[RMDB]
RNA sequence: GGGAACGACUCGAGUAGAGUCGAAAACAAACAAAGCAAAAUUGUCCAUUGCGGUCUACCGUCAGAAUUUCGGGCGGAUAUACGACAUUAUACAGAAAGCCGGCCGCAAUGUCGUAUAGAAAGGAAACAUGAGGUAACUCUUCGGAGUUACCUCAUGAAAAGAAACAACAACAACAAC
Reactivity to DMS in 0.01 (KOAc 150mM, MgCl2 10mM, bicine 150mM(pH8.5), 24C), signal-to-noise 2, nucleotides 027 to 126: c040a130a140a100c210a030a070a080g010c030a050a030a040a140u020u000g000u000c040c020a110u000u000g010c070g000g000u000c050u040a120c000c000g000u010c000a030g000a020a220u000u040u010c040g030g000g020c030g000g000a070u000a000u000a050c070g000a010c000a050u000u020a090u020a180c180a200g000a170a070a050g060c000c150g010g010c000c000g060c080a000a000u020g000u000c060g030u000a020u020a030g000a110a060a090g020g010a110a080a180
Reactivity to 2A3 in 0.01 (KOAc 150mM, MgCl2 10mM, bicine 150mM(pH8.5), 24C), signal-to-noise 3, nucleotides 027 to 126: c030a010a130a000c000a150a060a010g170c060a090a060a070a130u050u070g080u100c100c040a020u020u130g000c030g000g000u000c030u020a030c010c000g020u050c020a020g050a230a190u120u230u210c030g030g000g020c000g000g040a000u030a000u000a070c030g050a010c000a030u070u100a120u040a090c090a020g190a170a060a000g030c010c100g060g000c010c010g060c050a010a000u000g010u000c000g000u020a010u010a000g210a020a060a000g100g040a010a090a040